[RMDB]
RNA sequence: GGGAACGACUCGAGUAGAGUCGAAAAGUUCGAGCAUGAGCCUAUCUCCGAACGAAGAGCACGCGUGGGGAAGGAUCAGCGCCCGAGAGGGGAAAAUGGCAAAGAGCGGAGGAACGUUGAGAGGAUGUCUCCCAAGAAGAAUCUGAGAGAAUUCAAGGGGAUAGUUUAUCUUCGGAUAAACUAUCCCAAAAGAAACAACAACAACAAC
Reactivity to 2A3 in 0.01 (KOAc 150mM, MgCl2 10mM, bicine 150mM(pH8.5), 24C), signal-to-noise 1, nucleotides 027 to 156: g040u070u050c010g000a050g000c030a100u110g030a010g020c000c000u110a270u090c010u080c030c040g000a190a050c010g010a100a040g060a010g000c060a010c120g070c070g050u120g000g000g000g000a000a030g010g000a010u060c010a010g030c020g050c080c000c050g070a050g030a030g000g010g010g000a050a080a000a040u080g030g000c120a150a030a000g090a030g040c060g010g000a010g020g020a080a020c100g060u160u200g080a060g000a020g060g010a030u030g100u000c030u020c050c030c010a090a000g010a010a010g050a060a070u000c020u060g010a030g020a010g000a150a060u130u100c050a070a060g180